[RMDB]
RNA sequence: GGGAACGACUCGAGUAGAGUCGAAAAAAGUUAGGGAUCAGUGUGGAGACAGGUCAUAACUCGCCAUUGAAUAUACAUGCCAUAUCUUCCAACAACCAUGUCAAGCAACUGGGUAGGGCAAAAGCCGCACUAAGCCCACUUUCGAGUGGGCUUAGUGAAAAGAAACAACAACAACAAC
Reactivity to 2A3 in 0.01 (KOAc 150mM, MgCl2 10mM, bicine 150mM(pH8.5), 24C), signal-to-noise 1, nucleotides 027 to 126: a000a000g100u060u050a060g030g000g030a030u030c030a040g050u010g000u020g110g010a030g020a030c020a030g020g010u040c040a040u040a090a010c010u000c020g060c010c000a050u080u080g050a100a030u100a010u040a100c080a060u100g080c010c000a010u020a020u030c010u160u000c010c000a020a020c010a030a020c090c030a080u070g050u110c050a060a060g020c020a030a060c020u040g000g000g080u060a050g060g000g010c000a020a080a020a250g010c000c010g000
Reactivity to DMS in 0.01 (KOAc 150mM, MgCl2 10mM, bicine 150mM(pH8.5), 24C), signal-to-noise 2, nucleotides 027 to 126: a060a030g000u000u010a090g020g030g010a060u030c090a070g000u000g010u000g000g010a120g010a060c100a040g030g010u010c100a070u010a070a090c090u000c060g040c050c050a080u010u020g000a120a050u020a090u010a080c110a030u000g000c020c000a050u000a070u000c020u000u010c040c010a070a070c080a070a080c090c010a040u010g010u000c050a050a120g020c060a040a060c110u000g000g010g000u000a070g000g000g010c050a070a050a050a110g040c060c130g000

Background
The record gives the reactivity of an RNA of 177 nucleotides to 2A3 and DMS. Reactivities are rounded to 0.1 and cut off at 0 and 3. Reactivities are given for positions 27 through 126. The reactions ran in a buffer of 150 mM KOAc, 10 mM MgCl2 and 150 mM bicine (pH 8.5), at 24 C. For 2A3, 952 sequencing reads were counted. The data come from the RNA Mapping Database (RMDB), library OK2TST.